[RMDB]
Chemical mapping of a 177-nucleotide RNA with DMS and 2A3.
For 2A3, 1,501 sequencing reads were counted.
DMS adducts were read by reverse transcription with MarathonRT.
High 2A3 reactivity points to a flexible backbone, as in loops and unpaired stretches.
The reactions ran in a buffer of 150 mM KOAc, 10 mM MgCl2 and 150 mM bicine (pH 8.5), at 24 C.
RNA sequence: GGGAACGACUCGAGUAGAGUCGAAAAGAAAGCAGGGUUGAAUAGUGAUUGAGCUUCGAAACGUUAACUUCAGUCGGUCGACGUCUUAACUGGUGCGGAAGACAAUAUCAUGUAAUGCGAUAUGGCGGUUACUUGAAGGCUUCGGCCUUCAAGUAACAAAAGAAACAACAACAACAAC
Reactivity to DMS in 0.01 (KOAc 150mM, MgCl2 10mM, bicine 150mM(pH8.5), 24C), signal-to-noise 3, nucleotides 027 to 126: g020a090a090a050g010c030a060g000g000g010u010u000g000a050a080u020a070g020u010g000a100u010u050g020a080g000c060u020u000c050g010a030a060a100c120g000u000u010a070a020c070u000u000c080a040g000u010c060g000g040u010c060g010a040c070g000u000c040u000u020a030a100c070u010g010g030u000g000c060g000g010a010a030g000a040c090a050a060u000a050u000c040a060u000g000u010a060a080u010g010c080g000a040u000a030u020g000g010c120g010
Reactivity to 2A3 in 0.01 (KOAc 150mM, MgCl2 10mM, bicine 150mM(pH8.5), 24C), signal-to-noise 3, nucleotides 027 to 126: g100a000a050a000g050c020a020g060g000g030u020u050g020a030a030u060a110g050u070g070a100u060u040g000a050g080c010u060u050c090g060a050a090a000c040g020u030u060a060a070c010u080u090c020a080g030u020c000g060g000u050c040g000a070c020g010u030c010u010u050a050a020c040u030g010g010u100g100c000g060g010a030a000g090a030c010a060a030u130a020u080c030a010u030g150u260a100a070u110g040c030g000a050u020a050u160g110g010c040g010